[RMDB]
RNA sequence: GGGAACGACUCGAGUAGAGUCGAAAAUCAUUGAGAUGCUGGGCGCUAUGGUCGUCCUCCUCCGGCUGACCUCCUUCUCACCUGCUGACCGGCGCCGCACAGGCGGCAUCUCAGCUUCGUGUGCAAAAAAAGAAUGGUCGGUUCGCCGACCAUUCAACGUAUGCUAACGGUUCGCCGUUAGCAUACGAAAAGAAACAACAACAACAAC
Reactivity to 2A3 in 0.01 (KOAc 150mM, MgCl2 10mM, bicine 150mM(pH8.5), 24C), signal-to-noise 2, nucleotides 027 to 156: u080c030a020u060u160g000a020g000a000u000g000c020u010g010g010g000c010g010c030u070a170u280g040g010u010c020g030u050c000c010u020c020c030u040c010c020g030g000c010u050g040a040c000c040u080c010c040u050u060c080u010c020a050c010c020u120g010c100u090g000a040c030c000g010g020c020g010c000c030g000c010a100c020a030g110g010c000g000g000c000a000u000c010u010c020a000g000c020u120u150c060g170u070g010u000g080c050a010a090a030a000a000a050a100g000a000a000u000g020g000u000c010g000g000u030u070c220g050c100c010g000a010c000c000a000u000u000c000a020a020
Reactivity to DMS in 0.01 (KOAc 150mM, MgCl2 10mM, bicine 150mM(pH8.5), 24C), signal-to-noise 1, nucleotides 027 to 156: u010c050a210u000u000g000a040g010a000u000g050c020u010g000g020g010c000g010c020u000a060u020g030g000u000c000g010u000c030c020u000c020c010u000c010c040g030g020c000u000g000a060c040c050u000c020c040u000u000c050u000c010a090c060c040u000g030c030u000g010a030c020c030g010g010c060g010c000c050g020c110a150c140a160g000g030c040g030g000c000a020u000c000u000c030a070g000c080u010u000c070g010u000g000u000g000c080a010a010a080a130a130a120a150g000a060a030u000g030g010u000c010g030g010u010u010c300g030c000c000g030a010c150c010a020u000u000c000a060a110